[RMDB]
RNA sequence: GGGAACGACUCGAGUAGAGUCGAAAAUGCAUUUCUGAGACUUCAACUGAACAAGUUGACGUUUCUCAUGAGACUUCUGACGACGAGUGGGCUGCUGCAGUUGAUGAAGCGUUCCCUCUCGAUGAAGCUCCUGAUAUUUCUUCGGAAAUAUCAGGAGAAAAGAAACAACAACAACAAC
Reactivity to DMS in 0.01 (KOAc 150mM, MgCl2 10mM, bicine 150mM(pH8.5), 24C), signal-to-noise 2, nucleotides 027 to 126: u010g010c150a120u010u010u010c020u000g010a020g010a020c010u000u000c000a010a000c000u000g010a090a070c240a130a020g000u010u000g000a010c030g010u000u000u000c000u000c010a060u000g010a080g010a180c040u000u000c000u010g010a180c300g020a110c100g010a050g000u010g010g010g000c200u000g000c020u010g010c020a020g010u010u000g010a140u000g010a050a030g000c020g010u000u000c000c000c000u000c020u000c000g000a150u010g000a070a060g000
Reactivity to 2A3 in 0.01 (KOAc 150mM, MgCl2 10mM, bicine 150mM(pH8.5), 24C), signal-to-noise 2, nucleotides 027 to 126: u090g000c030a070u050u080u000c030u030g010a010g000a020c010u000u000c000a000a000c000u040g050a090a060c080a220a040g010u000u000g000a000c010g010u020u160u000c040u000c010a010u150g010a010g050a030c010u040u010c010u030g100a090c070g000a000c050g000a010g000u120g000g030g000c040u130g030c010u030g030c000a050g040u240u150g120a190u060g030a050a000g000c010g000u100u080c000c000c000u010c010u010c020g030a040u050g030a010a000g060

This 177-nucleotide RNA was probed chemically with DMS and 2A3. Conditions: 150 mM KOAc, 10 mM MgCl2 and 150 mM bicine (pH 8.5), 24 C. For 2A3, 2,020 sequencing reads were counted.